[RMDB]
RNA sequence: GGGAACGACUCGAGUAGAGUCGAAAAGUCUUACUGAACUGGCGUUUGAGCUGGGAAUGAAUGACGCACCACGCCGUAAAGGGCCGCUCUCCCGCGCCCUGCGACGUCGCCUUGAAGGUACACAGGGCUGAUAGGAUGAUUUCGAUCAUCCUAUCAGAAAAGAAACAACAACAACAAC
Reactivity to 2A3 in 0.01 (KOAc 150mM, MgCl2 10mM, bicine 150mM(pH8.5), 24C), signal-to-noise 5, nucleotides 027 to 126: g010u000c010u040u130a220c020u080g020a040a010c010u010g030g010c070g110u130u210u300g180a090g020c000u020g010g030g030a010a030u030g010a020a060u120g010a010c010g000c020a030c020c010a010c020g000c020c000g040u060a150a130a100g030g010g000c040c060g010c020u040c020u040c010c020c000g010c010g000c000c010c000u010g010c000g010a020c020g020u050c080g040c010c010u070u070g110a190a040g110g030u120a020c050a010c010a050g030g020g000
Reactivity to DMS in 0.01 (KOAc 150mM, MgCl2 10mM, bicine 150mM(pH8.5), 24C), signal-to-noise 9, nucleotides 027 to 126: g010u000c010u000u000a150c030u000g010a300a240c020u000g000g020c000g010u010u010u000g010a160g010c020u000g000g000g000a040a070u000g010a050a040u000g010a030c020g020c140a210c040c030a070c040g000c010c010g010u010a030a130a080g010g000g010c060c060g010c040u000c120u010c070c070c060g010c090g010c000c000c000u000g010c020g010a030c040g010u000c130g000c030c000u000u000g010a090a070g000g010u010a060c110a190c020a040g000g000g010

Chemical mapping of a 177-nucleotide RNA with 2A3 and DMS. It was measured as part of the RMDB library OK2TRN. The reactions ran in a buffer of 150 mM KOAc, 10 mM MgCl2 and 150 mM bicine (pH 8.5), at 24 C.